[RMDB]
RNA sequence: GGGAACGACUCGAGUAGAGUCGAAAAGCUGAGUAGAAAUGGCUUGGGAGCCUGAUCCAUGGAGACAGUAGCACAGAGUUACCUUAUGAAUGUUCUGAAAUAUUCUCAUGAUGACAAGCCUCUGGGCUAAUUUUUGUGUUUUUUUGUAGAGAUGGGAACGACUACUUUUAUUCGUAAAAGUAGUCGUAAAAGAAACAACAACAACAAC
Reactivity to 2A3 in 0.01 (KOAc 150mM, MgCl2 10mM, bicine 150mM(pH8.5), 24C), signal-to-noise 5, nucleotides 027 to 156: g050c030u040g020a010g040u060a030g090a070a100a100u100g020g010c020u020u030g020g020g050a030g030c020c020u030g030a060u020c040c030a080u090g020g010a040g000a030c020a060g060u060a020g020c020a010c010a030g040a020g030u070u100a080c030c020u100u110a080u130g050a090a030u050g050u100u050c040u040g050a040a100a060u150a080u140u050c040u020c020a070u080g070a050u070g020a040c030a090a020g020c010c020u020c070u080g030g030g010c010u020a060a050u020u040u030u080u060g010u000g000u030u010u020u010u030u030u040g030u050a030g000a020g020a060u100g040g040g030a030
Reactivity to DMS in 0.01 (KOAc 150mM, MgCl2 10mM, bicine 150mM(pH8.5), 24C), signal-to-noise 2, nucleotides 027 to 156: g010c040u000g000a080g020u010a090g020a080a090a100u000g030g010c040u000u030g010g030g010a120g020c020c030u000g010a130u000c030c020a050u000g020g010a190g020a100c040a080g030u000a030g000c010a040c040a070g010a160g020u000u000a040c040c010u020u000a130u010g010a060a050u010g020u000u000c080u010g000a100a080a070u010a060u000u000c020u000c070a090u010g000a080u000g010a060c030a080a100g010c010c010u000c070u000g030g010g040c030u010a020a020u000u000u000u010u010g010u010g020u000u000u000u000u000u000u000g010u000a080g010a110g020a080u000g000g010g030a170

The record gives the reactivity of an RNA of 207 nucleotides to 2A3 and DMS. For 2A3 the reverse transcriptase was SuperScript II with manganese. It was measured as part of the RMDB library OK3TST. The reactions ran in a buffer of 150 mM KOAc, 10 mM MgCl2 and 150 mM bicine (pH 8.5), at 24 C.